[RMDB]
RNA sequence: GGGAACGACUCGAGUAGAGUCGAAAAGCAAUAGAGUGAGACUCUGUCUCAAAAAAAAAGUAUAUGUAAGCUGGGUGUGGUGGCAUGCACCUGUAGUCCCAAAUAGUGGGGAGGCUGAGGUAGGAGGUCCAGUUACAUAAUUCGUUAUGUAACUGGAAAAAGAAACAACAACAACAAC
Reactivity to 2A3 in 0.01 (KOAc 150mM, MgCl2 10mM, bicine 150mM(pH8.5), 24C), signal-to-noise 2, nucleotides 027 to 126: g020c020a040a060u100a140g080a030g110u070g010a050g040a030c020u030c110u300g060u020c010u060c050a000a040a020a010a000a000a010a010a000g150u140a190u020a010u120g050u040a060a040g010c010u030g050g000g000u030g010u020g010g020u040g010g050c040a020u060g000c000a040c000c010u030g020u030a040g030u000c000c010c000a000a090a010u140a020g060u070g010g010g000g020a030g000g000c040u020g010a000g060g020u030a030g010g050a020g010g040
Reactivity to DMS in 0.01 (KOAc 150mM, MgCl2 10mM, bicine 150mM(pH8.5), 24C), signal-to-noise 4, nucleotides 027 to 126: g010c050a100a080u000a080g010a120g010u000g010a060g000a110c010u010c170u010g000u010c000u010c010a010a010a000a000a040a040a060a100a100g000u010a050u000a060u000g000u000a060a060g030c050u000g010g010g020u000g030u000g010g010u000g010g000c060a060u010g010c040a030c020c030u000g000u000a050g000u010c000c020c010a050a070a070u010a070g020u000g010g000g000g000a080g010g010c060u000g000a030g000g020u010a060g010g000a060g000g010
Overview
An RNA of 177 nucleotides, treated with 2A3 and DMS and read out base by base. High DMS reactivity at an A or C suggests that its Watson-Crick edge is free. It was measured as part of the RMDB library OK2TRN. For DMS, 6,450 sequencing reads were counted. The RNA was probed in 150 mM KOAc, 10 mM MgCl2 and 150 mM bicine (pH 8.5) at 24 C.